[RMDB]
RNA sequence: GGGAACGACUCGAGUAGAGUCGAAAAUUGGUGCAACGGAGCGCCGAGGCUGGCCGUUGAUUCGGUUGUCAGAUUGUAGUAUUCCAUUCUGCUGAGCUCUGCCUGUGGUCUUCGGAGAGAAAGAAAGCCUAAUGAUCGUAUUCGUACGAUCAUUAGGAAAAGAAACAACAACAACAAC
Reactivity to DMS in 0.01 (KOAc 150mM, MgCl2 10mM, bicine 150mM(pH8.5), 24C), signal-to-noise 6, nucleotides 027 to 126: u030u030g010g030u000g010c050a110a150c100g010g000a100g010c070g000c030c030g010a050g020g010c040u010g010g010c020c020g020u000u010g000a100u010u000c050g010g010u000u010g010u010c050a040g000a080u020u000g010u000a060g020u020a090u010u020c050c030a070u020u020c010u010g000c050u010g000a140g000c050u000c040u010g010c020c020u010g010u020g010g000u000c010u000u000c020g000g000a110g000a080g010a090a080a060g000a080a110a140g010
Reactivity to 2A3 in 0.01 (KOAc 150mM, MgCl2 10mM, bicine 150mM(pH8.5), 24C), signal-to-noise 9, nucleotides 027 to 126: u070u070g040g000u040g010c030a070a040c070g080g020a080g010c030g000c020c020g000a010g030g010c060u060g040g000c010c010g020u030u100g070a110u070u080c050g030g010u050u060g060u050c020a020g030a110u040u130g060u050a090g030u040a140u150u040c030c030a020u080u000c000u020g030c020u040g020a020g010c010u030c030u080g010c000c000u070g030u110g060g010u000c000u020u000c020g030g010a050g020a010g040a070a090a000g090a050a070a010g060
An RNA of 177 nucleotides, treated with DMS and 2A3 and read out base by base. The reactions ran in a buffer of 150 mM KOAc, 10 mM MgCl2 and 150 mM bicine (pH 8.5), at 24 C. Reactivities are given for positions 27 through 126. Source: RMDB library OK1LIB, as collected in RNAgym. For DMS the reverse transcriptase was MarathonRT.